[RMDB]
RNA sequence: GGGAACGACUCGAGUAGAGUCGAAAAAUUGAGUGAAUCGCCGUAACGGAGCGUGUUCGUCCGCGACGUCACGGUUAAAUCAAACGACAGAACUAAACAUGUAGAACUGGUCGUGGACCGCUUCUGGACGCGGGUUCGAUUCCCGCCGCCUCCACCACGUAUCUUCUCUGUUCGCAGAGAAGAUACGAAAAGAAACAACAACAACAAC
Reactivity to 2A3 in 0.01 (KOAc 150mM, MgCl2 10mM, bicine 150mM(pH8.5), 24C), signal-to-noise 3, nucleotides 027 to 156: a000u140u070g030a030g050u140g040a050a060u090c050g000c030c000g000u010a030a010c010g010g010a010g000c040g040u120g120u200u180c160g050u080c010c000g000c000g010a010c000g000u030c030a010c040g000g000u010u030a030a040a010u060c050a060a040a050c000g010a010c010a060g040a060a020c000u090a060a160a160c100a100u230g090u170a020g050a060a050c090u060g110g090u040c020g010u010g000g040a040c010c020g020c050u100u030c050u210g010g020a020c060g010c020g010g000g000u050u130c030g010a020u030u010c000c000c000g000c000c000g000c000c040u040c020c020a070c020c020a060
Reactivity to DMS in 0.01 (KOAc 150mM, MgCl2 10mM, bicine 150mM(pH8.5), 24C), signal-to-noise 1, nucleotides 027 to 156: a050u010u060g000a200g050u010g000a150a080u000c130g030c040c010g050u010a090a030c030g000g000a180g000c010g100u010g030u000u020c110g030u000c120c020g010c090g000a150c060g000u000c020a010c050g130g040u000u020a010a040a120u010c120a060a110a140c060g010a050c010a000g020a090a300c020u000a090a070a140c220a160u010g000u000a100g000a020a220c040u000g000g020u000c010g000u000g000g030a080c070c050g000c060u000u000c040u020g000g020a050c100g030c010g040g020g000u020u000c090g010a300u020u000c000c000c000g030c000c040g010c020c000u000c000c010a070c050c030a120